[RMDB]
RNA sequence: GGGAACGACUCGAGUAGAGUCGAAAACAACGGGUGCGCUAGUCCAUCUGCUAUGUGAGCAGGGUGGGCGACACCGUCAAAUUGCGGGGAUCUCCUAUAGCUCAUCGUACCCGCUCAGCGCUCGAAAGGGCGCUGUGCUCAAGGUAACAAUCGGUGACGUAAUGGGGAGGUUCGCCUCCCCAUUACGAAAAGAAACAACAACAACAAC
Reactivity to 2A3 in 0.01 (KOAc 150mM, MgCl2 10mM, bicine 150mM(pH8.5), 24C), signal-to-noise 1, nucleotides 027 to 156: c040a030a030c060g030g000g000u080g010c150g000c160u140a110g010u000c000c000a020u000c000u000g000c000u020a080u290g240u170g260a030g000c000a000g030g170g020u000g020g000g000c000g020a020c020a020c010c010g010u000c040a120a100a070u160u120g030c030g000g000g020g010a140u050c080u080c060c010u060a070u120a090g080c010u000c030a000u000c010g000u030a030c000c000c000g020c000u010c010a000g000c000g000c010u000c000g060a060a050a120g000g000g000c000g010c000u000g000u030g000c010u050c090a050a060g000g000u030a020a050c050a280a040u050c000g000g010u000g030a020
Reactivity to DMS in 0.01 (KOAc 150mM, MgCl2 10mM, bicine 150mM(pH8.5), 24C), signal-to-noise 1, nucleotides 027 to 156: c050a050a000c040g000g020g050u000g060c040g050c070u000a090g040u010c010c000a040u000c000u000g030c000u010a250u000g030u010g030a090g010c030a040g000g050g070u010g000g060g020c010g010a100c010a040c010c000g000u000c020a040a160a160u000u000g000c010g010g030g000g050a090u000c010u000c010c030u010a110u000a180g040c000u000c000a020u010c040g000u000a070c000c020c110g000c010u000c010a020g000c000g010c000u000c010g020a080a060a210g010g000g020c020g010c020u000g000u000g010c040u000c050a080a020g030g020u000a100a130c080a040a110u000c030g050g000u000g000a180